An RNA of 177 nucleotides, treated with 2A3 and read out base by base. It was measured as part of the RMDB library M2PK50. Values are in units of 0.01, from 0 to 300, in steps of 10. The 2A3 profile rests on 1,186 reads. 2A3 adducts were read by reverse transcription with SuperScript II with manganese.
RNA sequence: GGGAACGACUCGAGUAGAGUCGAAAAGCCGUAAGCUUCGGCUUACGGCAAAGCUGACCAGCUAUGAGGUCAUACAUCGUCAUAGCACAAAAAUUAAAAUAAAAAGUGCUGUCUUCGGACAGCACAACACCGUUUAGUUCUUCGGAACUAAACGGUGAAAAGAAACAACAACAACAAC
Reactivity to 2A3 in 0.01 (KOAc 150mM, MgCl2 10mM, bicine 150mM(pH8.5), 24C), signal-to-noise 2, nucleotides 027 to 126: g020c000c000g010u000a000a000g000c030u030u240c300g050g050c000u010u000a000c000g000g000c000a020a000a000g020c040u020g000a000c000c010a010g000c000u000a010u000g000a000g030g010u010c030a050u200a150c050a170u150c170g070u010c000a010u010a000g020c090a000c020a010a130a040a040a020u300u300a170a110a020a050u250a060a060a040a010a020g020u000g000c000u000g010u000c000u020u020c070g090g030a000c020a010g000c000a000c000a010a020